[RMDB]
RNA sequence: GGGAACGACUCGAGUAGAGUCGAAAACUGCCGACGCCCUGUGUUGAGGCGUGGUGUCGCCUCGAGUCAGUCGUUGAGAUCCGAAGAAGGGUGUACUUCUGACUGAUCGAGCAGAAGUGAGUCGAGGGCGUCUGCGUUGGUUCGCCAGCGUGGGCGCAAAAGAAACAACAACAACAAC
Reactivity to DMS in 0.01 (KOAc 150mM, MgCl2 10mM, bicine 150mM(pH8.5), 24C), signal-to-noise 9, nucleotides 027 to 126: c030u010g010c030c010g000a050c030g010c010c010c020u010g010u010g010u010u010g000a110g000g000c020g020u000g010g020u010g000u020c030g010c050c000u000c010g000a070g010u010c000a030g000u010c020g010u010u000g010a200g000a020u000c000c020g010a200a100g020a150a130g000g010g010u000g010u030a060c000u000u000c000u030g020a090c070u000g000a040u010c050g000a120g010c040a040g000a100a080g010u020g000a070g010u000c010g000a110g000g000
Reactivity to 2A3 in 0.01 (KOAc 150mM, MgCl2 10mM, bicine 150mM(pH8.5), 24C), signal-to-noise 9, nucleotides 027 to 126: c010u020g010c000c000g030a010c000g010c000c010c000u030g010u000g020u050u160g090a030g020g030c000g010u020g010g030u020g010u010c010g010c000c000u000c000g000a010g080u010c010a000g000u000c000g000u000u000g020a030g020a030u000c000c010g020a090a040g080a050a080g070g000g000u040g020u040a080c000u000u000c020u060g020a020c000u000g000a020u010c010g020a000g000c010a010g000a120a020g060u050g040a020g030u020c010g000a020g010g040
The data come from the RNA Mapping Database (RMDB), library OK1LIB. An RNA of 177 nucleotides, treated with DMS and 2A3 and read out base by base. Conditions: 150 mM KOAc, 10 mM MgCl2 and 150 mM bicine (pH 8.5), 24 C. For DMS, 111,138 sequencing reads were counted. High 2A3 reactivity points to a flexible backbone, as in loops and unpaired stretches.